Structure probing data (2A3) for a 207-nucleotide construct. It was measured as part of the RMDB library VIROID. The 2A3 profile rests on 669 reads. 2A3 is a SHAPE reagent: it acylates the 2'-hydroxyl of flexible nucleotides of all four kinds. The reactions ran in a buffer of 150 mM KOAc, 10 mM MgCl2 and 150 mM bicine (pH 8.5), at 24 C.
[RMDB]
RNA sequence: GGGAACGACUCGAGUAGAGUCGAAAAUAGAAAGGCUAAGAACCUCGCAAUGAGGUAAGGUGGGACUUUUCCUUCAGGAACCAAGCGGUUGGUUCCGAGGGGGGUGUGAUCCAGGUACCGCCGUAGAAACUGAGUUACGACGUCUACCCGGGAUUCAGCUGGAAAUAUACUUCGGUAUAUUUCCAGCAAAAGAAACAACAACAACAAC
Reactivity to 2A3 in 0.01 (KOAc 150mM, MgCl2 10mM, bicine 150mM(pH8.5), 24C), signal-to-noise 1, nucleotides 027 to 156: u100a020g050a000a040a010g000g000c010u000a010a020g030a020a020c020c000u000c050g010c060a110a220u180g010a010g000g010u050a060a040g010g000u040g020g010g030a010c020u060u010u070u000c030c000u040u030c170a080g020g000a000a000c000c000a100a010g210c090g220g140u030u050g000g000u000u000c020c000g000a060g000g010g020g010g030g000u030g040u040g040a050u030c060c010a010g020g010u010a040c010c040g020c010c010g030u020a010g030a060a060a020c050u060g010a010g090u020u010a000c010g000a000c020g170u030c000u000a000c000c000c020g020g010g000a090u170u100c050a020